Structure probing data (2A3 and DMS) for a 170-nucleotide construct. The DMS profile rests on 15,960 reads. For 2A3 the reverse transcriptase was SuperScript II with manganese. The 2A3 profile rests on 20,454 reads.

RNA sequence: GGGAACGACUCGAGUAGAGUCGAAAAGUUUCUUUAAGGAGGGCUCUUCAGUGACGCUCAAACAUUUUUUCUUUGCUCAAGAUGGUAAUGCUGCUAUUACAGAUUAUAAUUACUAUUCUUAUAAUCUCAACGGAUAGGUUCGCCUAUCCGAAAAGAAACAACAACAACAAC
Reactivity to 2A3 in 0.01 (KOAc 150mM, MgCl2 10mM, bicine 150mM(pH8.5), 24C), signal-to-noise 8, nucleotides 027 to 129: g000u000u000u000c000u020u030u020a060a020g070g030a030g000g020g010c010u010c000u100u040c050a120g030u050g090a020c040g000c010u010c000a020a110a020c030a080u040u030u020u000u050u040c040u030u070u100g050c020u060c090a020a030g020a070u020g010g000u050a070a040u050g020c030u000g000c020u090a080u240u130a120c020a010g000a010u070u060a040u110a130a030u050u020a020c030u080a090u170u060c000u020u030a060u020a120a060u010c030u010c090a060a070
Reactivity to DMS in 0.01 (KOAc 150mM, MgCl2 10mM, bicine 150mM(pH8.5), 24C), signal-to-noise 4, nucleotides 027 to 129: g000u030u020u030c000u020u030u010a090a180g040g000a090g030g010g000c030u060c000u000u010c060a000g040u030g020a070c150g040c040u040c080a040a110a060c100a050u000u000u000u000u000u000c010u020u020u040g000c090u030c050a060a090g000a080u000g000g000u020a020a080u010g010c000u050g030c050u040a120u070u030a200c060a000g000a000u000u000a050u020a080a010u000u020a110c060u000a050u080u020c020u030u040a060u040a080a040u020c030u000c110a090a250